[RMDB]
RNA sequence: GGGAACGACUCGAGUAGAGUCGAAAAUCGCCGCGGACGCCGGCCGUGCGUAGGUCGGCGUAUACCCUCGGCCAUAACAUCGACCUAAACCCCUGCAGGUUCUGUUCGGUCAGCCGGGCGCACGCUGUGCAGGUGAUGAUUUCGAUCAUCACCUGCAAAAAGAAACAACAACAACAAC
Reactivity to DMS in 0.01 (KOAc 150mM, MgCl2 10mM, bicine 150mM(pH8.5), 24C), signal-to-noise 1, nucleotides 027 to 126: u000c180g020c010c000g020c250g010g010a040c030g030c030c000g030g020c010c010g020u000g020c170g010u010a080g000g040u000c010g000g000c010g000u000a030u040a140c300c040c010u000c020g000g000c000c100a050u020a090a110c120a040u000c060g000a040c050c010u000a100a130a180c050c010c030c050u010g000c160a150g000g000u010u000c040u010g000u010u000c100g000g030u030c090a080g040c000c030g010g000g010c050g000c120a070c110g030c020u000g020